[RMDB]
RNA sequence: GGGAACGACUCGAGUAGAGUCGAAAACAUGGCACGAUCCAUGCGUGAGUACUGAUCCGGAUCUCACAUGUCAUGACUCAUGGAUCAUGCAGUACAGCUAGGCUACGUCUAGGUACCAUGUGAUCCACCAUUCGCUAUCAUUCGUGAUAGCGAAUGGAAAAGAAACAACAACAACAAC
Reactivity to 2A3 in 0.01 (KOAc 150mM, MgCl2 10mM, bicine 150mM(pH8.5), 24C), signal-to-noise 4, nucleotides 027 to 126: c010a000u030g020g000c010a010c130g050a060u030c000c030a060u120g090c090g030u100g050a040g040u130a100c060u110g080a220u060c080c090g020g020a060u050c020u030c010a080c000a100u110g060u060c040a050u090g080a100c030u010c060a060u070g000g010a010u020c010a010u060g040c010a000g000u030a020c060a120g160c030u010a010g030g000c030u150a060c280g020u000c010u000a010g000g000u000a020c010c040a040u150g000u010g030a010u000c000c010a010
Reactivity to DMS in 0.01 (KOAc 150mM, MgCl2 10mM, bicine 150mM(pH8.5), 24C), signal-to-noise 3, nucleotides 027 to 126: c020a030u000g000g010c040a120c160g000a040u000c000c020a050u000g020c150g010u000g020a090g000u000a140c120u020g010a100u030c140c130g010g000a120u000c030u000c100a040c080a110u020g000u010c060a050u000g010a170c070u010c020a130u000g010g000a010u000c000a040u010g030c140a070g010u000a120c040a160g010c020u000a030g000g000c030u020a120c280g010u000c000u000a010g000g000u000a020c060c040a140u000g010u000g000a060u010c000c050a160

About this RNA
Structure probing data (2A3 and DMS) for a 177-nucleotide construct. Conditions: 150 mM KOAc, 10 mM MgCl2 and 150 mM bicine (pH 8.5), 24 C. The DMS profile rests on 1,866 reads. DMS adducts were read by reverse transcription with MarathonRT. The data come from the RNA Mapping Database (RMDB), library OK2TRN.